Chemical mapping of a 207-nucleotide RNA with 2A3. It was measured as part of the RMDB library M2RFPK. 2A3 adducts were read by reverse transcription with SuperScript II with manganese. Conditions: 150 mM KOAc, 10 mM MgCl2 and 150 mM bicine (pH 8.5), 24 C.
RNA sequence: GGGAACGACUCGAGUAGAGUCGAAAAUGGAAGCAUUAAAACCAUUCGAGCUAGUCAAUGCGUGGCGUGUCUCUCCGCAGCGUGUUGGCGAAUGUAAAGAGUGACUAAGCAUGUAGUACCGAGGAUGAUAAGAGCAAUUCGUUCGCGAAUUGCUCAAUCCAACAUGGCUGUUCGCAGCCAUGUUGGAAAAAGAAACAACAACAACAAC
Reactivity to 2A3 in 0.01 (KOAc 150mM, MgCl2 10mM, bicine 150mM(pH8.5), 24C), signal-to-noise 1, nucleotides 027 to 156: u040g000g070a070a010g030c050a050u140u200a130a010a000a060c030c020a020u030u090c090g040a100g060c040u090a050g030u020c000a020a060u000g030c010g000u050g120g000c000g000u010g010u000c060u000c000u000c020c020g000c000a030g010c010g000u040g000u010u000g000g000c020g010a000a000u030g070u110a000a090a030g000a000g010u000g000a040c030u070a070a000g050c000a000u040g040u080a000g090u040a110c040c100g010a020g060g040a020u110g040a040u050a300a050g000a000g000c020a010a010u000u000c020g070u070u090c250g060c030g090a000a000u010u000g000c000u000c000a000a000